[RMDB]
RNA sequence: GGGAACGACUCGAGUAGAGUCGAAAACGUCUACGAUAAUCAUGGUGCGUCUACUCACUGUCAUGCUCCCAGUGUACUUUAGCUUCAGAUACAUUCGACGCGUCCAACAUCAAUCCAACCGCAUUACAGAUAUAGUGACCUUCGGGUCACUAUAUCUAAAAGAAACAACAACAACAAC
Reactivity to DMS in 0.01 (KOAc 150mM, MgCl2 10mM, bicine 150mM(pH8.5), 24C), signal-to-noise 2, nucleotides 027 to 126: c030g020u000c060u000a050c070g000a070u030a070a120u060c030a140u030g000g000u020g000c040g010u020c020u010a070c050u000c000a060c110u030g000u000c060a100u010g000c070u010c010c000c000a100g000u010g030u000a030c090u010u010u020a060g000c030u020u000c040a030g030a060u040a030c070a120u000u010c050g000a070c010g020c000g010u000c000c050a050a060c100a040u020c010a030a030u010c060c030a060a060c040c070g000c080a070u020u010a050c200
Reactivity to 2A3 in 0.01 (KOAc 150mM, MgCl2 10mM, bicine 150mM(pH8.5), 24C), signal-to-noise 5, nucleotides 027 to 126: c020g030u020c040u090a040c040g070a070u110a240a100u170c100a080u130g070g000u050g030c020g060u000c010u040a030c000u000c030a030c030u040g010u090c020a040u160g060c010u030c010c000c010a020g010u020g030u060a050c020u050u060u110a000g030c000u020u060c020a030g010a100u060a090c030a120u020u060c020g040a010c010g000c020g060u020c010c010a030a040c020a060u070c030a020a100u030c000c010a010a060c010c000g060c050a040u090u140a050c030

Source: RMDB library OK1LIB, as collected in RNAgym. An RNA of 177 nucleotides, treated with DMS and 2A3 and read out base by base. The reactions ran in a buffer of 150 mM KOAc, 10 mM MgCl2 and 150 mM bicine (pH 8.5), at 24 C.